Structure probing data (2A3) for a 207-nucleotide construct. 2A3 is a SHAPE reagent: it acylates the 2'-hydroxyl of flexible nucleotides of all four kinds. For 2A3 the reverse transcriptase was SuperScript II with manganese. Source: RMDB library OK3TST, as collected in RNAgym.

[RMDB]
RNA sequence: GGGAACGACUCGAGUAGAGUCGAAAACGCUUGCACUUGACAGUCGGUAUGGAGUAAAAGGCUUUGAAACCCAUGGAAGUCUGGGCACAUGCGCUCCUCUCAUUGAGGGCAGUAGUGUCCAUGUGCAGUCUUUUGCAAUAUCAUAUGUUAUAAGAAAGACGACUUUUAUCUUCGGAUAAAAGUCGUCAAAAGAAACAACAACAACAAC
Reactivity to 2A3 in 0.01 (KOAc 150mM, MgCl2 10mM, bicine 150mM(pH8.5), 24C), signal-to-noise 1, nucleotides 027 to 156: c070g000c030u040u180g000c140a050c090u060u150g000a030c000a070g030u160c000g120g000u130a200u130g000g150a030g120u030a000a120a060a000g000g000c000u080u160u160g160a220a190a170c000c140c000a090u080g150g000a150a000g110u020c000u030g000g110g000c000a000c000a040u090g000c000g000c050u230c110c000u030c000u040c000a300u090u300g000a030g040g000g070c110a030g030u140a050g000u000g080u080c010c010a000u080g010u010g000c040a000g010u000c000u000u110u050u080g080c010a020a020u030a000u010c000a000u300a040u200g010u130u300a130u300a140a080g000a110a090a090